[RMDB]
RNA sequence: GGGAACGACUCGAGUAGAGUCGAAAAGAGUACUUGUACACAUAUGGAAUAUAUCUAUAAUUUGAUCCAUGUUCAUAGGAUACUCUAUGAAUGGAUACUUGUAUGAUUUGCGUGGUUGUUUAUCACAAUGAAAUAUUUUGUUACAGUCUAGUAUCCAGCCGUGAGACAUAUUCGUAUGUCUCACGGCAAAAGAAACAACAACAACAAC
Reactivity to 2A3 in 0.01 (KOAc 150mM, MgCl2 10mM, bicine 150mM(pH8.5), 24C), signal-to-noise 1, nucleotides 027 to 156: g020a000g040u040a010c020u020u020g020u070a010c130a020c040a110u070a050u050g030g090a050a050u100a050u030a020u070c070u060a300u190a300a300u230u060u210g060a010u040c010c000a010u090g020u000u050c010a030u040a010g010g150a120u020a200c020u000c010u090a010u030g070a040a020u000g000g000a000u020a010c000u010u010g050u040a060u110g130a060u040u060u250g020c000g000u030g000g000u060u040g010u170u200u050a060u070c010a000c000a080a040u220g040a040a100a000u140a020u010u050u110u000g050u010u190a010c030a000g010u000c010u160a000g000u010a070u000c000c050a000
An RNA of 207 nucleotides, treated with 2A3 and read out base by base. The reactions ran in a buffer of 150 mM KOAc, 10 mM MgCl2 and 150 mM bicine (pH 8.5), at 24 C. For 2A3, 325 sequencing reads were counted. Reactivities are given for positions 27 through 156. Reactivities are rounded to 0.1 and cut off at 0 and 3. Source: RMDB library OK3TST, as collected in RNAgym.